Source: RMDB library OK1LIB, as collected in RNAgym. Structure probing data (2A3) for a 177-nucleotide construct. For 2A3, 377 sequencing reads were counted. Values cover nucleotides 27 to 126. The RNA was probed in 150 mM KOAc, 10 mM MgCl2 and 150 mM bicine (pH 8.5) at 24 C.
[RMDB]
RNA sequence: GGGAACGACUCGAGUAGAGUCGAAAAAUGGCUCAAUGUCUAUUAUGGAGCUUGCCACAGCAGGUAUAGGUAUGGCUGAUAAAAAUAUUCUCAAGCAAGCAUUUUAUUCUUACAAGCAUACAAGACGCGUGACUGCUCAGUUCGCUGAGCAGUCACGAAAAGAAACAACAACAACAAC
Reactivity to 2A3 in 0.01 (KOAc 150mM, MgCl2 10mM, bicine 150mM(pH8.5), 24C), signal-to-noise 1, nucleotides 027 to 126: a010u000g000g070c080u130c250a000a190u120g000u090c000u140a230u230u130a180u300g070g050a000g000c000u000u000g000c000c070a120c000a020g000c000a000g080g020u130a230u180a000g130g000u120a060u170g000g070c000u000g100a000u300a110a120a000a000a000u180a000u040u040c020u000c100a110a000g050c000a010a000g000c080a100u070u070u070u070a050u300u170c000u000u000a070c120a030a000g070c000a020u010a170c000a090a090g000a120c000g000